RNA sequence: GGGAACGACUCGAGUAGAGUCGAAAAAGGAGAUCGCCGACUUCAUCGAAGAGCAGCUCAACGGCAUCGAGAGCUUCGAGGAUGUGGAGAAUGACCUGCUCGACGCAAUCGGCAAGGGCUUCGCCGUAUCCGAGAUCCUGUGGGGCUAUGACGAAGGGCUGCACGGUUACUUCGGUAACCGUGCAGCAAAAGAAACAACAACAACAAC
Reactivity to 2A3 in 0.01 (KOAc 150mM, MgCl2 10mM, bicine 150mM(pH8.5), 24C), signal-to-noise 2, nucleotides 027 to 156: a000g090g020a010g020a060u020c050g020c080c000g080a050c030u070u110c040a160u130c120g060a060a040g020a010g000c020a000g010c030u030c060a060a030c010g090g000c010a050u060c050g020a020g030a020g110c000u110u030c090g010a030g000g020a000u000g000u010g070g000a050g040a090a080u090g100a130c000c020u030g040c120u150c180g030a010c020g010c060a010a240u030c000g000g000c050a020a100g030g010g010c030u050u020c000g000c000c000g020u000a010u040c020c020g030a070g000a030u020c020c020u070g000u040g010g010g000g000c010u060a050u130g050a060c060g040a040a030g090g030